[RMDB]
RNA sequence: GGGAACGACUCGAGUAGAGUCGAAAAGACCUUCAGUUCGCUGAAGGUCGAUGUUGGUAAGAGAGAUUACCAUCUGUUAAGUGAUAUGGAUAAGAUCUCUCAGUGAACGUGCUUUCGAGCACGUUAAUUACACGUAUGAUUUCGAUCAUACGUGUAAAAAAGAAACAACAACAACAAC
Reactivity to DMS in 0.01 (KOAc 150mM, MgCl2 10mM, bicine 150mM(pH8.5), 24C), signal-to-noise 8, nucleotides 027 to 126: g010a010c000c000u000u000c000a000g010u000u010c240g030c000u000g010a010a010g000g010u000c000g000a030u000g010u010u010g010g000u010a080a120g000a020g000a010g000a030u000u000a110c100c080a040u000c030u000g010u000u000a110a160g020u010g010a090u000a030u000g000g000a090u000a080a130g000a030u000c000u000c000u000c010a150g010u010g010a030a010c000g010u000g010c000u000u000u010c200g010a010g010c010a000c000g010u000u000a020a110
Reactivity to 2A3 in 0.01 (KOAc 150mM, MgCl2 10mM, bicine 150mM(pH8.5), 24C), signal-to-noise 4, nucleotides 027 to 126: g010a000c000c000u000u000c000a030g010u030u090c150g020c120u000g010a000a030g040g000u000c000g000a000u030g050u100u100g050g050u120a220a020g010a010g000a000g010a010u000u030a040c020c010a010u000c010u060g110u140u150a180a150g150u140g200a110u070a020u200g030g020a050u030a100a100g020a040u020c010u020c000u020c010a000g010u030g120a010a000c000g000u000g010c000u080u100u100c220g030a000g000c010a000c000g000u000u000a000a000

Overview:
An RNA of 177 nucleotides, treated with DMS and 2A3 and read out base by base. Source: RMDB library M2PK50, as collected in RNAgym.